[RMDB]
RNA sequence: GGGAACGACUCGAGUAGAGUCGAAAACGUGUACCCCGCAGCGCCUCGCUGCAUACAGACACGCCGGGUUGACCGAGCCGUCCUUCUCAGGUGGGGUUACCAUCACCACACGGGGCACCCCUGCGAGGCUACUACUCAGUUUCGACUGAGUAGUAGCAAAAGAAACAACAACAACAAC
Reactivity to 2A3 in 0.01 (KOAc 150mM, MgCl2 10mM, bicine 150mM(pH8.5), 24C), signal-to-noise 1, nucleotides 027 to 126: c000g000u040g020u160a130c020c010c000c060g020c010a000g020c020g040c030c070u190c090g000c020u020g010c010a000u100a030c050a010g110a030c000a000c050g050c020c040g090g070g070u070u170g060a080c030c020g020a010g000c010c000g040u030c010c020u100u070c050u020c020a090g000g080u170g040g010g000g000u030u050a300c000c020a060u060c020a060c070c010a040c010a010c130g000g010g040g000c010a040c000c000c000c010u040g010c040g030a070g100
Reactivity to DMS in 0.01 (KOAc 150mM, MgCl2 10mM, bicine 150mM(pH8.5), 24C), signal-to-noise 3, nucleotides 027 to 126: c060g000u010g020u010a120c080c020c030c210g030c050a030g020c050g030c080c050u010c040g010c030u010g030c030a070u000a070c180a130g000a130c050a060c030g060c070c040g020g000g010u000u000g010a070c070c010g000a070g000c030c010g000u000c010c020u000u000c050u000c060a070g000g010u000g010g000g010g020u000u000a070c050c020a080u010c040a110c150c080a050c140a110c070g020g010g000g030c090a090c050c000c020c020u000g000c210g010a060g000

The record gives the reactivity of an RNA of 177 nucleotides to 2A3 and DMS. For 2A3, 2,793 sequencing reads were counted. It was measured as part of the RMDB library OK2TST. The reactions ran in a buffer of 150 mM KOAc, 10 mM MgCl2 and 150 mM bicine (pH 8.5), at 24 C.